Structure probing data (2A3) for a 207-nucleotide construct. The data come from the RNA Mapping Database (RMDB), library M2RFPK. For 2A3, 607 sequencing reads were counted. 2A3 adducts were read by reverse transcription with SuperScript II with manganese.

[RMDB]
RNA sequence: GGGAACGACUCGAGUAGAGUCGAAAAUUAAUGAAGCAAAUCUCCAAACGCCAACGAUGAGCGUUUCGCAAUCGCCGCUUAAGGCUUUUGCCGAGGCUGCUUGAGCCUUGUUACCAAAGAAAAGCUGAAAACCCAAAUGUCUUCGGACAUUUGGGAAGAUUGUUAGUUGCUUCGGCAACUAACAAUCAAAAGAAACAACAACAACAAC
Reactivity to 2A3 in 0.01 (KOAc 150mM, MgCl2 10mM, bicine 150mM(pH8.5), 24C), signal-to-noise 1, nucleotides 027 to 156: u080u030a020a070u260g050a110a040g050c090a120a070a100u020c080u020c030c020a030a070a000c010g000c020c040a110a110c140g090a240u170g010a100g060c010g000u020u050u050c020g000c000a000a030u000c010g020c010c000g000c130u140u220a090a050g010g000c000u000u010u010u010g010c000c000g010a000g000g000c110u180g000c000u060u050g000a000g020c000c000u010u030g050u090u190a050c010c030a000a020a000g020a010a030a010a000g030c030u010g020a050a090a030a030c000c000c000a000a030a030u010g000u030c000u000u060c210g070g030a000c000a000u000u010u000g000g000g000a000a000